[RMDB]
RNA sequence: GGGAACGACUCGAGUAGAGUCGAAAAGUACAGUGAGAGGAUCGACUGACGGCGCUAUGGCCGCGCGACUGUACACACAUAGGCCGCGAUGGCCUGGCGCAUGAUCUGUGCGCGCGAUCAGGCCGCGUGACGAAGGAGGAUUCGUCCUCCUUCGUCAAAAAGAAACAACAACAACAAC
Reactivity to DMS in 0.01 (KOAc 150mM, MgCl2 10mM, bicine 150mM(pH8.5), 24C), signal-to-noise 6, nucleotides 027 to 126: g000u010a050c070a060g020u010g010a140g010a120g000g000a060u000c040g000a130c080u000g010a080c120g020g000c010g010c030u000a020u020g020g020c000c000g020c010g020c010g000a040c000u000g000u000a110c170a140c260a080c190a110u010a150g000g030c030c000g020c040g010a070u000g040g010c000c000u000g000g010c010g020c020a010u000g010a080u000c070u000g000u000g000c020g010c050g000c050g000a110u020c100a100g010g020c060c030g010c090g010
Reactivity to 2A3 in 0.01 (KOAc 150mM, MgCl2 10mM, bicine 150mM(pH8.5), 24C), signal-to-noise 3, nucleotides 027 to 126: g060u050a070c060a020g020u060g110a200g020a050g120g060a090u070c040g050a040c100u060g020a030c050g060g020c000g030c030u070a080u300g020g000c010c000g010c000g000c000g020a010c000u020g070u160a050c110a000c010a000c010a170u110a070g060g000c080c000g000c030g060a140u120g010g000c020c010u010g000g000c030g000c010a020u030g030a150u000c030u020g050u080g060c020g000c010g010c010g060a100u140c070a020g040g040c080c000g000c030g020